[RMDB]
Record summary: The data come from the RNA Mapping Database (RMDB), library OK1LIB. An RNA of 177 nucleotides, treated with 2A3 and DMS and read out base by base. 2A3 is a SHAPE reagent: it acylates the 2'-hydroxyl of flexible nucleotides of all four kinds. Reactivities are given for positions 27 through 126.
RNA sequence: GGGAACGACUCGAGUAGAGUCGAAAAGGCGGCCUCGUCGACCAGAUCUCGAUCCACCAGAGGAAGGUCAUCCCGCAUGGUCAUGGGGUGUGCGGUGGAGGUGGGGAGACCGAAACCGCAAAGGGUCGCACUGUCCAAAGUUCGCUUUGGACAGUGCAAAAGAAACAACAACAACAAC
Reactivity to 2A3 in 0.01 (KOAc 150mM, MgCl2 10mM, bicine 150mM(pH8.5), 24C), signal-to-noise 4, nucleotides 027 to 126: g040g000c030g010g030c020c030u080c070g050u050c070g030a050c000c020a030g050a130u060c030u030c030g070a110u040c000c020a030c020c020a130g000a070g140g040a050a040g040g030u050c010a040u040c010c000c000g030c080a090u130g050g030u110c020a080u070g010g000g020g030u080g060u040g020c000g000g000u020g020g030a030g030g000u090g000g080g060g020a110g040a020c010c000g020a040a010a000c010c000g020c010a010a010a000g020g030g010u070c120
Reactivity to DMS in 0.01 (KOAc 150mM, MgCl2 10mM, bicine 150mM(pH8.5), 24C), signal-to-noise 1, nucleotides 027 to 126: g000g000c000g020g000c060c020u040c050g000u000c030g020a040c000c010a030g020a080u000c000u030c000g000a240u000c070c010a060c120c110a090g000a060g000g020a180a130g000g050u000c010a120u000c000c020c020g010c180a160u000g000g010u040c080a140u000g000g000g030g000u000g000u000g000c000g000g000u000g000g000a290g000g010u000g020g020g000g000a140g000a070c000c000g000a270a150a030c040c010g030c020a050a030a040g000g020g000u000c090